[RMDB]
Structure probing data (2A3 and DMS) for a 177-nucleotide construct. Values cover nucleotides 27 to 126. The reactions ran in a buffer of 150 mM KOAc, 10 mM MgCl2 and 150 mM bicine (pH 8.5), at 24 C. The data come from the RNA Mapping Database (RMDB), libraries RFM100 and RFMREP. For DMS the reverse transcriptase was MarathonRT.

RNA sequence: GGGAACGACUCGAGUAGAGUCGAAAAUAACAGCCGAGCAGCAAACGCUGUUCUCCGUACGGCAGAACUCCAGCCCGUAUGAUCGGCCUAACGUGACCGCCCUAUGGCAAGGACGGGAUUCUGCCUAACCUAUGCGCUCAUUCGUGAGCGCAUAGGUAAAAGAAACAACAACAACAAC
Reactivity to 2A3 in 0.01 (KOAc 150mM, MgCl2 10mM, bicine 150mM(pH8.5), 24C), signal-to-noise 3, nucleotides 027 to 126: u200a020a040c070a000g100c010c060g030a020g020c010a000g000c020a230a080a120c170g000c000u010g040u030u010c010u030c020c040g080u060a030c010g000g000c020a000g010a020a020c060u050c080c040a030g000c010c010c030g040u070a120u120g090a090u090c040g020g000c020c010u060a110a050c060g130u150g080a050c000c040g080c000c020c020u090a110u150g020g020c030a030a070g030g000a010c040g020g000g020a000u010u000c000u000g000c000c010u010a020
Reactivity to DMS in 0.01 (KOAc 150mM, MgCl2 10mM, bicine 150mM(pH8.5), 24C), signal-to-noise 3, nucleotides 027 to 126: u080a100a060c200a140g000c050c100g000a120g000c000a040g060c090a080a090a140c210g020c020u000g030u000u000c000u050c030c070g000u020a070c150g020g040c020a020g020a030a020c150u010c040c050a060g080c180c020c010g010u010a090u070g010a050u010c180g010g040c010c000u000a050a140c300g000u040g000a110c000c050g070c130c000c000u000a050u020g060g010c040a000a130g020g000a060c040g030g000g020a050u010u000c000u000g040c010c000u010a020